Description
Structure probing data (DMS and 2A3) for a 207-nucleotide construct. The 2A3 profile rests on 856 reads. Values are in units of 0.01, from 0 to 300, in steps of 10. The reactions ran in a buffer of 150 mM KOAc, 10 mM MgCl2 and 150 mM bicine (pH 8.5), at 24 C.
RNA sequence: GGGAACGACUCGAGUAGAGUCGAAAAACAUCGGGAAGAUUCUGAUGUGGAAAUGGUGGAAGAUGAUUCCCGAAAGGAAAUGACUGCAGCUUGUACCCCCCGGAGAAGGAUCAUUAACCUCACUAGUGUUUUGAGUCUCCAGGAAGAAAUUAAUGAGAUAAUAUCAAGGUUUCGACCUUGAUAUUAUAAAAGAAACAACAACAACAAC
Reactivity to DMS in 0.01 (KOAc 150mM, MgCl2 10mM, bicine 150mM(pH8.5), 24C), signal-to-noise 2, nucleotides 027 to 156: a010c010a090u010c010g030g010g000a100a080g030a300u000u000c040u000g020a100u000g020u010g000g010a100a100a060u010g010g030u000g000g010a170a070g000a060u000g010a300u000u000c000c000c020g000a050a090a080g000g010a090a080a070u010g010a110c060u000g030c020a080g020c040u000u020g000u010a200c020c010c010c010c020c000g030g000a070g030a080a060g000g010a090u000c010a060u010u010a060a080c040c000u000c090a060c060u000a090g010u000g020u000u010u000u000g010a090g020u000c020u000c020c030a040g010g010a090a070g000a080a050a090u000u000a100a090u010g010a180g000
Reactivity to 2A3 in 0.01 (KOAc 150mM, MgCl2 10mM, bicine 150mM(pH8.5), 24C), signal-to-noise 2, nucleotides 027 to 156: a000c000a040u030c030g010g000g030a030a050g020a090u020u030c010u060g070a110u080g060u190g060g050a110a120a050u150g020g030u090g040g070a010a010g010a010u020g010a020u000u000c000c000c000g000a050a000a000g010g000a050a070a040u110g050a010c010u090g010c040a010g050c060u120u090g000u250a210c000c000c000c010c030c030g000g010a020g000a030a010g040g020a000u020c010a020u050u030a030a020c020c000u050c000a080c040u030a070g030u040g040u150u020u040u030g020a030g020u000c020u000c010c010a000g020g020a060a050g050a090a100a010u170u160a030a070u210g000a040g010